[RMDB]
RNA sequence: GGGAACGACUCGAGUAGAGUCGAAAAGCUUGUAUACUGAAGACAUUUGAAAAUGCAGGGCAGAUAUCCAGAGUGGAGGAUGGUGGCGAACAGUAGUACAUCCACAAGAUGGGAAGUAGUUGUUCUGCCAUUGAAAUGAUUAUUGGGAAACACCAUGGAUUUAAACGGUCUUCGGACCGUUUAAAUCAAAAGAAACAACAACAACAAC
Reactivity to DMS in 0.01 (KOAc 150mM, MgCl2 10mM, bicine 150mM(pH8.5), 24C), signal-to-noise 2, nucleotides 027 to 156: g020c030u010u000g010u000a170u000a120c020u020g000a140a180g030a150c050a040u000u040u000g010a080a050a110a100u000g020c010a050g000g010g010c050a080g000a100u010a060u000c110c040a080g000a150g000u010g070g000a080g040g020a070u000g000g050u000g020g030c150g020a090a060c050a080g020u010a300g030u000a050c020a070u000c000c000a060c060a100a280g040a300u010g010g010g010a120a170g040u000a110g000u010u010g070u000u000c010u000g000c000c030a090u010u000g020a020a030a080u010g010a090u000u010a090u000u010g020g010g010a110a050a080c120a030c020c020a040u010g020
Reactivity to 2A3 in 0.01 (KOAc 150mM, MgCl2 10mM, bicine 150mM(pH8.5), 24C), signal-to-noise 2, nucleotides 027 to 156: g000c000u080u070g040u040a140u070a150c070u070g090a070a040g030a040c020a060u150u140u230g070a080a130a040a010u060g000c010a020g040g000g000c000a000g020a130u040a020u050c010c030a030g000a030g090u030g040g020a050g070g000a010u060g010g030u010g010g000c010g020a010a000c000a010g050u070a000g030u000a040c010a050u050c040c040a070c030a090a040g070a130u110g040g000g000a120a010g000u040a010g000u010u010g030u020u000c040u070g050c010c000a000u010u050g030a010a020a080u070g040a040u070u120a040u230u040g000g030g040a110a110a010c060a010c070c020a090u180g050
Chemical mapping of a 207-nucleotide RNA with DMS and 2A3. For 2A3, 847 sequencing reads were counted. The RNA was probed in 150 mM KOAc, 10 mM MgCl2 and 150 mM bicine (pH 8.5) at 24 C. DMS adducts were read by reverse transcription with MarathonRT. The DMS profile rests on 2,154 reads.